[RMDB]
RNA sequence: GGGAACGACUCGAGUAGAGUCGAAAAGAUAUGGACUGUGCUAGAAGUCCGUCGGAAACGACGGGUUCUUCUUGGACCACACAUGUCCUAAGUCAAACCUAAGAGUGACUUCGGUCACUCUUAGGAACGCUUCAAACCUGUUCGCAGGUUUGAAGCGAAAAGAAACAACAACAACAAC
Reactivity to DMS in 0.01 (KOAc 150mM, MgCl2 10mM, bicine 150mM(pH8.5), 24C), signal-to-noise 2, nucleotides 027 to 126: g010a020u020a300u010g010g020a070c030u020g050u000g030c040u020a040g020a030a040g030u040c010c000g010u000c000g010g010a110a050a260c030g000a010c000g000g010g000u000u010c000u000u000c000u000u000g010g010a120c250c140a300c050a000c020a000u020g000u000c000c000u020a120a070g030u010c030a050a130a200c000c030u000a000a000g000a010g000u000g010a010c010u000u020c130g020g000u000c000a000c000u000c000u000u010a020g000g000a030a060
Reactivity to 2A3 in 0.01 (KOAc 150mM, MgCl2 10mM, bicine 150mM(pH8.5), 24C), signal-to-noise 1, nucleotides 027 to 126: g030a010u040a040u130g000g000a010c010u030g020u070g020c080u030a000g000a030a010g010u000c000c000g000u000c000g000g000a070a050a030c020g000a010c000g000g000g050u170u040c010u020u010c010u030u100g070g060a060c020c100a040c040a010c000a050u300g020u000c000c000u030a080a000g110u110c060a080a090a180c000c010u010a010a000g000a010g000u000g010a030c000u090u200c300g000g040u000c000a000c000u010c000u000u000a000g010g010a000a000
The data come from the RNA Mapping Database (RMDB), library TTRDEL. An RNA of 177 nucleotides, treated with DMS and 2A3 and read out base by base. Reactivities are given for positions 27 through 126. The 2A3 profile rests on 1,882 reads. For DMS, 1,102 sequencing reads were counted. For DMS the reverse transcriptase was MarathonRT. For 2A3 the reverse transcriptase was SuperScript II with manganese. Conditions: 150 mM KOAc, 10 mM MgCl2 and 150 mM bicine (pH 8.5), 24 C. As a SHAPE reagent, 2A3 marks flexible, mostly unpaired nucleotides at the ribose 2'-OH.